[RMDB]
RNA sequence: GGGAACGACUCGAGUAGAGUCGAAAACCUUCCCCUUACGGACAAAAGCUGGUCCCGAUAGGGGCACCCACAAUAGGAUGGCAAAAGGGGACUCGGGUCCGUCGUUCCAUCCUUUUCUUACCUUUUGAAGCUUGGGAGUUCGCUCCCAAGAAAAGAAACAACAACAACAAC
Reactivity to DMS in 0.01 (KOAc 150mM, MgCl2 10mM, bicine 150mM(pH8.5), 24C), signal-to-noise 7, nucleotides 027 to 129: c040c060u000u100c020c010c010c020u000u000a190c300g020g010a030c020a000a090a100a110g060c190u080g040g040u010c030c020c030g020a100u050a000g000g000g000g000c040a060c030c020c000a030c130a090a070u000a070g020g020a060u020g000g070c010a030a010a070a080g010g010g010g010a030c000u030c140g060g050g040u020c050c060g030u000c080g030u040u020c010c020a050u040c040c020u050u020u020u040c000u020u060a180c070c080u060u000u070u070g050a080a080g000
Reactivity to 2A3 in 0.01 (KOAc 150mM, MgCl2 10mM, bicine 150mM(pH8.5), 24C), signal-to-noise 9, nucleotides 027 to 129: c020c000u050u100c000c000c000c000u010u030a010c000g020g000a010c020a030a200a040a040g110c150u190g080g040u030c000c010c000g080a080u100a090g000g000g000g000c010a050c000c010c000a060c030a050a070u080a120g040g010a030u010g040g020c060a010a020a040a060g040g010g000g020a010c020u050c120g290g030g030u020c030c020g100u050c010g060u060u000c010c000a020u000c010c010u030u040u040u030c050u070u120a160c030c010u090u070u050u160g110a070a020g040
Source: RMDB library 15KLIB, as collected in RNAgym.
Structure probing data (DMS and 2A3) for a 170-nucleotide construct.
Values cover nucleotides 27 to 129.
For DMS the reverse transcriptase was MarathonRT.
Conditions: 150 mM KOAc, 10 mM MgCl2 and 150 mM bicine (pH 8.5), 24 C.